Structure probing data (2A3 and DMS) for a 177-nucleotide construct. The DMS profile rests on 847 reads.
[RMDB]
RNA sequence: GGGAACGACUCGAGUAGAGUCGAAAAGGAUGUACCGCUUCUUGUCUCGACCUCGACCUGGACUAGUGAUCGAGGGAGGCUCACCUUCACGCCCGCUGAGUAGAUGUAGUCGCAUACUCCAAUGACUUCCAUACUGUUUCUUCGGAAACAGUAUGGAAAAAGAAACAACAACAACAAC
Reactivity to 2A3 in 0.01 (KOAc 150mM, MgCl2 10mM, bicine 150mM(pH8.5), 24C), signal-to-noise 2, nucleotides 027 to 126: g040g020a060u070g010u060a060c010c050g020c120u070u000c010u050u050g040u030c000u010c100g110a150c000c000u010c010g020a050c030c010u060g050g080a100c080u110a080g050u060g120a300u020c000g000a020g000g010g000a010g000g000c000u000c030a110c000c000u030u080c040a020c070g040c010c020c030g000c050u040g020a010g080u100a000g000a050u060g040u090a010g040u020c020g040c040a010u030a070c020u000c050c000a090a120u120g070a090c020u030
Reactivity to DMS in 0.01 (KOAc 150mM, MgCl2 10mM, bicine 150mM(pH8.5), 24C), signal-to-noise 1, nucleotides 027 to 126: g010g010a100u010g020u000a050c070c100g000c050u000u000c060u010u000g020u000c030u000c000g000a270c050c020u010c020g000a020c010c010u000g090g050a150c130u010a040g000u000g000a040u010c000g020a030g000g000g020a030g010g010c040u000c090a070c020c010u010u000c090a180c070g020c000c020c000g000c120u020g050a090g010u010a010g000a110u010g000u000a000g000u010c050g000c090a090u020a080c100u000c040c070a070a070u000g010a060c120u020